Chemical mapping of a 177-nucleotide RNA with DMS and 2A3. The data come from the RNA Mapping Database (RMDB), library RFM100.

RNA sequence: GGGAACGACUCGAGUAGAGUCGAAAAACGGGUUCCCUCCGACCCCCGGGGGACCGAUACCCUGGCGGGGUGCGCCCCCGUACGGGUGGGCCGCAUAGCCGACAGCCGUCGCAACCAGGGAGUCGCCUGUAUCGAACAUCUUCGGAUGUUCGAUACAAAAAGAAACAACAACAACAAC
Reactivity to DMS in 0.01 (KOAc 150mM, MgCl2 10mM, bicine 150mM(pH8.5), 24C), signal-to-noise 2, nucleotides 027 to 126: a130c110g000g000g020u000u040c030c010c020u010c020c070g010a190c000c020c020c010c000g060g020g020g010g000a030c300c010g000a130u010a100c000c050c000u000g000g040c080g030g010g000g000u020g020c010g000c000c040c000c000c050g020u010a090c190g000g000g000u010g040g000g020c100c050g000c050a020u000a060g010c000c000g000a070c060a000g000c190c150g040u000c000g020c050a160a130c070c120a090g030g000g010a140g030u010c000g000c160c010
Reactivity to 2A3 in 0.01 (KOAc 150mM, MgCl2 10mM, bicine 150mM(pH8.5), 24C), signal-to-noise 3, nucleotides 027 to 126: a000c050g060g000g010u020u040c000c000c000u020c020c000g060a050c000c000c000c000c000g000g000g000g000g010a000c010c010g000a020u080a070c000c050c010u010g060g010c070g030g020g010g000u010g010c060g060c000c010c000c020c000g050u100a140c120g040g000g020u130g010g020g000c070c000g010c030a050u080a060g190c030c010g020a020c010a050g050c030c070g010u040c050g020c040a020a030c000c020a030g020g020g000a020g030u020c000g020c020c020